[RMDB]
RNA sequence: GGGAACGACUCGAGUAGAGUCGAAAAGUGGCGCCGGAUGCCCUCUGGGACGUCAUACGCCAGGCCGUGGGUGUUGGUCUCGGCCGAGUUGACAAACAGGGCUGGGUGCAGCACGCAGCGAUAGGCGAGGCGUGCUAUGGUUCGCCAUAGCACGCCUAAAAGAAACAACAACAACAAC
Reactivity to 2A3 in 0.01 (KOAc 150mM, MgCl2 10mM, bicine 150mM(pH8.5), 24C), signal-to-noise 3, nucleotides 027 to 126: g110u070g020g000c000g000c010c000g080g000a100u190g000c000c000c000u090c050u060g000g000g090a080c110g030u000c000a010u090a170c030g100c040c050a040g000g000c020c050g010u050g030g060g020u200g090u170u140g100g070u020c000u020c020g000g000c000c020g000a070g020u030u120g040a040c030a010a140a020c030a030g000g010g000c010u040g000g040g000u050g040c000a030g020c000a010c050g070c000a020g090c000g110a120u130a090g140g000c040g010
Reactivity to DMS in 0.01 (KOAc 150mM, MgCl2 10mM, bicine 150mM(pH8.5), 24C), signal-to-noise 2, nucleotides 027 to 126: g000u010g000g010c000g040c050c020g010g010a040u010g010c040c040c020u010c050u000g020g000g000a300c120g000u000c000a000u070a060c090g010c100c030a120g000g010c020c000g000u020g010g020g040u010g000u030u020g000g000u040c000u000c070g000g000c010c000g010a180g000u000u000g010a060c060a090a260a150c060a060g000g000g000c010u010g030g000g010u000g010c070a070g020c020a080c010g020c060a020g040c000g000a140u020a090g000g000c040g000